[RMDB]
About this RNA
Conditions: 150 mM KOAc, 10 mM MgCl2 and 150 mM bicine (pH 8.5), 24 C. Chemical mapping of a 177-nucleotide RNA with DMS and 2A3. 2A3 adducts were read by reverse transcription with SuperScript II with manganese. Values are in units of 0.01, from 0 to 300, in steps of 10.
RNA sequence: GGGAACGACUCGAGUAGAGUCGAAAAAGCUGCGCGCCCGCGCCCUGCGGGGCUGGCAUGGUGAUGUGGUAGGCGUCGGCACUCACGCCAAACCCGGCGACUUCGGCGUAGAUGGUCGCGCCGCGGGCCGUGACCAAAAUUUCGAUUUUGGUCACGGAAAAGAAACAACAACAACAAC
Reactivity to DMS in 0.01 (KOAc 150mM, MgCl2 10mM, bicine 150mM(pH8.5), 24C), signal-to-noise 3, nucleotides 027 to 126: a120g000c030u000g010c010g010c050g030c020c000c020g000c020g000c010c030c150u030g030c040g010g000g000g000c160u010g010g000c040a150u060g030g010u000g010a070u060g020u000g000g000u030a080g010g030c060g020u030c010g010g020c020a030c050u000c000a020c010g000c010c000a000a100a230c030c020c020g000g030c040g000a170c100u030u020c250g000g020c040g010u030a090g010a090u030g010g000u030c020g000c020g020c040c030g010c000g000g030g000
Reactivity to 2A3 in 0.01 (KOAc 150mM, MgCl2 10mM, bicine 150mM(pH8.5), 24C), signal-to-noise 7, nucleotides 027 to 126: a000g030c030u030g000c000g000c000g020c010c000c000g000c010g020c000c000c010u090g020c030g000g010g030g000c030u010g020g000c040a100u150g150g040u070g050a140u140g030u050g060g180u100a120g050g070c060g030u100c040g080g010c010a020c020u030c010a010c030g000c000c000a040a050a080c020c010c010g100g030c040g090a160c060u180u150c080g010g000c000g010u040a140g030a240u150g020g020u150c030g000c000g000c000c000g010c010g000g010g000

Annotation:
DMS adducts were read by reverse transcription with MarathonRT.